[RMDB]
RNA sequence: GGGAACGACUCGAGUAGAGUCGAAAAGCGCAGUAGACUAGCACUAGUGAUCAGAGUACCGCGUACGGAUCCGUACGGUACACAGUACGUCAUGGUCUAGCUAGCUGUCAUGUCAUGGUAGGAUCCGCUGCUCACAACAUUUCGAUGUUGUGAGCAGAAAAGAAACAACAACAACAAC
Reactivity to 2A3 in 0.01 (KOAc 150mM, MgCl2 10mM, bicine 150mM(pH8.5), 24C), signal-to-noise 4, nucleotides 027 to 126: g080c070g010c030a020g010u110a030g050a250c010u030a030g000c040a010c020u030a050g120u030g100a030u050c050a050g010a030g100u010a000c010c040g070c040g020u010a010c000g000g100a180u040c140c010g020u020a010c000g010g010u040a010c060a010c000a020g080u110a040c100g060u010c050a090u030g030g000u000c000u020a030g000c000u010a020g040c020u000g060u110c040a100u120g090u060c030a060u090g080g020u080a060g050g040a040u010c000c020g020
Reactivity to DMS in 0.01 (KOAc 150mM, MgCl2 10mM, bicine 150mM(pH8.5), 24C), signal-to-noise 4, nucleotides 027 to 126: g020c120g020c050a060g010u000a120g010a100c020u000a150g010c080a070c040u000a060g030u000g010a030u000c060a060g010a160g010u000a010c000c030g000c060g030u000a050c000g000g020a110u000c120c050g020u000a040c010g000g000u000a040c130a110c080a080g010u000a040c110g000u010c050a090u000g000g010u000c010u000a080g010c000u000a070g020c060u010g010u000c030a100u010g010u000c060a040u010g010g020u000a080g010g000a050u000c020c040g000